[RMDB]
RNA sequence: GGGAACGACUCGAGUAGAGUCGAAAAGAUAUGGACACAUGCUUUCGACUCUCCAAGACAUGAUUUCGGGUCGGAAACGACCUUCGAUCAACAGCUUGUGAGAGUCGAAAGCAUGUGUCCUAAGUCACGUCUUGAAUGACUUCGGUCAUUCAAGACGAAAAGAAACAACAACAACAAC
Reactivity to DMS in 0.01 (KOAc 150mM, MgCl2 10mM, bicine 150mM(pH8.5), 24C), signal-to-noise 1, nucleotides 027 to 126: g000a110u000a300u000g000g000a020c000a030c000a030u010g000c000u000u030u000c000g010a050c000u000c020u000c000c000a040a020g000a050c110a290u000g000a010u000u000u000c300g000g000g020u000c000g010g000a070a010a220c000g010a000c010c020u020u000c260g000a000u000c000a000a150c300a060g000c000u000u000g000u000g020a030g000a010g000u000c000g010a010a010a000g010c010a000u000g000u000g000u000c000c000u000a000a040g000u000c010a240
This 177-nucleotide RNA was probed chemically with DMS. The RNA was probed in 150 mM KOAc, 10 mM MgCl2 and 150 mM bicine (pH 8.5) at 24 C.